[RMDB]
RNA sequence: GGGAACGACUCGAGUAGAGUCGAAAAGAUAUGGACUGGCUGAUGCAGAGCUAUCGGAAACGAUAGGCUCUGUAUAUCGGCCUGUCCUAAGUCAAAAGUCUCUACUUCGUUCGCGAAGUAGAGACAAUCGUGAUUGAGAGUUCGCUCUCAAUCACGAAAAAGAAACAACAACAACAAC
Reactivity to DMS in 0.01 (KOAc 150mM, MgCl2 10mM, bicine 150mM(pH8.5), 24C), signal-to-noise 2, nucleotides 027 to 126: g000a010u010a300u000g000g010a020c000u000g010g040c010u020g000a020u000g010c010a010g000a010g010c000u000a000u010c020g010g010a100a060a230c010g010a010u010a010g030g010c010u000c000u000g020u000a030u000a060u000c010g020g000c000c000u000g010u000c000c000u000a040a090g040u010c050a140a090a070a140g000u000c000u010c000u000a000c000u000u000c000g010u000u010c180g020c020g010a000a000g010u000a000g000a000g000a000c000a000a020
This 177-nucleotide RNA was probed chemically with DMS. DMS adducts were read by reverse transcription with MarathonRT. The reactions ran in a buffer of 150 mM KOAc, 10 mM MgCl2 and 150 mM bicine (pH 8.5), at 24 C. Source: RMDB library TTRDEL, as collected in RNAgym. The DMS profile rests on 1,578 reads. Values cover nucleotides 27 to 126.